RNA sequence: GGGAACGACUCGAGUAGAGUCGAAAAUCAACCAGUAUAUUUGGCUGGCCAAGGCAUCUUCAACUCUUGGCUAGUCUCUCUAAGCUGGGAGAAUAAAUCUUAUCAGUCUUGAACAAUUUAAGUUCUGUCGAAGAAGGGUGUUCGCACCCUUCUUCGAAAAAGAAACAACAACAACAAC
Reactivity to 2A3 in 0.01 (KOAc 150mM, MgCl2 10mM, bicine 150mM(pH8.5), 24C), signal-to-noise 3, nucleotides 027 to 126: u020c010a020a060c000c000a010g020u020a080u000a050u180u100u090g000g000c000u000g010g000c000c000a030a000g000g000c000a120u050c060u170u110c070a050a030c020u030c000u080u010g000g020c000u000a000g000u010c000u000c000u000c020u020a090a100g000c000u020g020g030g000a040g050a030a010u180a130a050a000u060c030u030u070a140u270c060a050g090u020c080u030u090g000a030a020c030a110a300u060u190u260a180a000g030u000u000c000u010g070
Reactivity to DMS in 0.01 (KOAc 150mM, MgCl2 10mM, bicine 150mM(pH8.5), 24C), signal-to-noise 1, nucleotides 027 to 126: u000c000a080a250c000c000a000g050u000a000u000a010u000u000u000g000g030c010u000g000g030c030c030a070a000g000g030c130a070u050c300u050u040c300a200a040c250u000c010u000u000g000g000c000u000a000g000u050c000u000c040u000c000u130a110a300g080c000u000g000g000g000a220g080a030a230u000a040a170a040u000c000u000u110a110u000c030a070g030u000c070u000u000g000a000a210c030a050a110u050u120u030a070a000g000u000u000c000u000g000

Structure probing data (2A3 and DMS) for a 177-nucleotide construct. 2A3 adducts were read by reverse transcription with SuperScript II with manganese. Source: RMDB library RFM100, as collected in RNAgym. The reactions ran in a buffer of 150 mM KOAc, 10 mM MgCl2 and 150 mM bicine (pH 8.5), at 24 C. DMS adducts were read by reverse transcription with MarathonRT.